[RMDB]
RNA sequence: GGGAACGACUCGAGUAGAGUCGAAAACUCAUCGCGUUCGCGCGAUGAGAAAAAGCGUACUACUUUCGGCCGAGGAUCCUCCCCACCCAAUCCCAAAUAGGAUUGGAGGGGGAGGCUAGAAAGUAUCGCAAAAAAGCCGCUUGUUCGCAAGCGGCAACAUUAUCAAGUGGUUCGCCACUUGAUAAUGAAAAGAAACAACAACAACAAC
Reactivity to DMS in 0.01 (KOAc 150mM, MgCl2 10mM, bicine 150mM(pH8.5), 24C), signal-to-noise 2, nucleotides 027 to 156: c000u000c010a010u000c000g040c030g010u000u000c300g050c040g030c010g020a030u030g000a020g020a000a040a060a140a100g020c020g010u010a140c170u000a010c000u000u000u000c000g020g030c150c070g010a180g010g010a200u010c020c010u000c010c000c000c000a040c000c000c000a000a010u000c010c010c020a080a120a220u000a060g010g020a040u000u000g000g000a030g000g050g000g000g000a000g010g020c030u000a020g000a030a000a030g010u000a030u020c010g000c020a000a070a090a080a130a070g020c010c000g040c010u000u010g000u000u010c300g040c020a030a030g040c000g030g000c000a000a020
Reactivity to 2A3 in 0.01 (KOAc 150mM, MgCl2 10mM, bicine 150mM(pH8.5), 24C), signal-to-noise 3, nucleotides 027 to 156: c010u010c000a000u000c010g000c010g050u080u040c220g020c000g010c010g090a010u020g000a000g040a080a050a010a000a010g060c060g030u110a110c060u000a000c000u060u000u000c010g090g000c080c070g170a150g110g050a120u080c000c000u010c000c000c000c000a040c010c010c000a000a000u020c010c000c030a200a300a110u290a110g010g000a010u000u010g000g000a060g000g000g000g000g000a000g000g000c000u010a010g000a000a000a000g010u020a020u300c180g000c000a030a000a060a050a050a040g030c020c010g010c000u020u000g080u090u120c290g000c180a000a000g000c000g000g010c000a000a000
An RNA of 207 nucleotides, treated with DMS and 2A3 and read out base by base. The DMS profile rests on 4,708 reads. It was measured as part of the RMDB library RNAMAK. As a SHAPE reagent, 2A3 marks flexible, mostly unpaired nucleotides at the ribose 2'-OH. For 2A3, 3,168 sequencing reads were counted. The RNA was probed in 150 mM KOAc, 10 mM MgCl2 and 150 mM bicine (pH 8.5) at 24 C.